Chemical mapping of a 177-nucleotide RNA with DMS and 2A3.
For 2A3, 36,156 sequencing reads were counted.
Conditions: 150 mM KOAc, 10 mM MgCl2 and 150 mM bicine (pH 8.5), 24 C.
The DMS profile rests on 24,838 reads.
RNA sequence: GGGAACGACUCGAGUAGAGUCGAAAAGAUAUGGACGGACUUGAUUUCGUUGAGCGCCUACCAACUUUCUAGUCGGAAACGACUAGAAAGUUGGAGGCCCAACGAUAAGGAUUGUCCGUCCUAAGUCCAAUAUACCGUAGUUCGCUACGGUAUAUUGAAAAGAAACAACAACAACAAC
Reactivity to DMS in 0.01 (KOAc 150mM, MgCl2 10mM, bicine 150mM(pH8.5), 24C), signal-to-noise 9, nucleotides 027 to 126: g000a100u010a300u000g010g000a020c000g000g000a010c000u000u000g000a300u010u000u000c000g020u000u000g000a140g020c230g020c000c000u000a170c000c000a010a010c000u000u000u000c000u000a000g010u000c000g010g000a130a110a250c010g010a010c000u000a000g000a000a000a000g010u000u000g000g000a030g000g010c000c010c000a000a000c000g000a030u010a010a040g000g000a240u000u000g000u000c000c000g010u000c000c000u000a010a100g000u010c040
Reactivity to 2A3 in 0.01 (KOAc 150mM, MgCl2 10mM, bicine 150mM(pH8.5), 24C), signal-to-noise 9, nucleotides 027 to 126: g070a040u130a080u240g000g000a000c010g000g010a000c010u060u070g050a060u120u090u010c000g000u000u030g100a250g130c290g040c060c000u300a300c170c020a000a000c010u000u010u040c000u000a010g010u000c010g010g010a140a100a110c010g000a000c000u000a000g000a000a000a000g000u000u000g000g010a000g010g000c000c000c000a000a010c010g030a040u100a060a020g160g050a050u060u100g010u000c000c000g000u000c000c000u000a010a000g010u000c010